Chemical mapping of a 177-nucleotide RNA with DMS and 2A3. The RNA was probed in 150 mM KOAc, 10 mM MgCl2 and 150 mM bicine (pH 8.5) at 24 C. Source: RMDB library OK2TRN, as collected in RNAgym. For 2A3, 3,613 sequencing reads were counted.

[RMDB]
RNA sequence: GGGAACGACUCGAGUAGAGUCGAAAAGCAAUUGCUGCAGCGGCGAUACCAGGGGCAGCUCGACGCGCGGGCCGACGAGUUCAUCGGGCACGCGGUGGAUGGCGCGACGAGAAUGCAGUCGCUGAUAACUAAUUAGGUGCUUCGGCACCUAAUUAGUAAAAGAAACAACAACAACAAC
Reactivity to DMS in 0.01 (KOAc 150mM, MgCl2 10mM, bicine 150mM(pH8.5), 24C), signal-to-noise 5, nucleotides 027 to 126: g010c100a210a100u000u010g010c040u010g010c020a050g000c030g010g020c020g010a120u000a160c060c050a150g000g000g000g020c020a040g000c020u000c020g010a120c030g030c040g020c010g000g010g010c000c000g010a100c040g010a090g040u000u010c050a130u020c190g020g010g020c020a080c030g010c030g010g000u000g000g010a120u010g010g000c030g000c020g010a100c020g020a050g000a060a060u000g010c030a130g010u000c020g010c010u000g000a080u020a080
Reactivity to 2A3 in 0.01 (KOAc 150mM, MgCl2 10mM, bicine 150mM(pH8.5), 24C), signal-to-noise 3, nucleotides 027 to 126: g030c050a090a300u220u230g040c030u090g030c020a020g000c020g040g000c020g060a060u060a200c020c020a050g080g020g090g000c010a030g000c010u000c010g030a030c000g000c000g020c010g050g090g000c020c010g130a300c010g010a020g030u080u100c090a150u240c270g000g020g020c050a000c020g000c050g000g000u050g060g080a130u110g090g000c000g000c010g030a020c010g020a000g040a150a040u050g010c010a030g010u010c010g000c000u000g010a010u030a110